Chemical mapping of a 177-nucleotide RNA with DMS.
It was measured as part of the RMDB library OK2TST.
The RNA was probed in 150 mM KOAc, 10 mM MgCl2 and 150 mM bicine (pH 8.5) at 24 C.
RNA sequence: GGGAACGACUCGAGUAGAGUCGAAAAUGAAUUGUACUUCAGAUUCUCUAUUCAUCCUUUUUAGAAAAAUGAAUCAAGUGAGUCCUAGGAUGGAAUUUUAAAUGUUAAGCAAGUUGAAUAAAUAAGAGAAGAGUAGUGUUUUCGAACACUACUCUUCAAAAGAAACAACAACAACAAC
Reactivity to DMS in 0.01 (KOAc 150mM, MgCl2 10mM, bicine 150mM(pH8.5), 24C), signal-to-noise 1, nucleotides 027 to 126: u000g010a030a020u000u000g020u020a060c160u000u000c070a070g000a180u010u010c010u000c030u010a130u000u020c020a040u000c050c010u000u000u000u050u010a130g010a000a030a060a080a110u000g000a060a050u000c100a060a050g040u010g020a060g020u000c030c090u000a020g010g020a030u000g010g010a010a040u000u030u000u000a010a050a130u000g010u010u020a060a120g000c100a050a070g000u000u000g000a050a080u010a090a050a040u020a100a080g040a300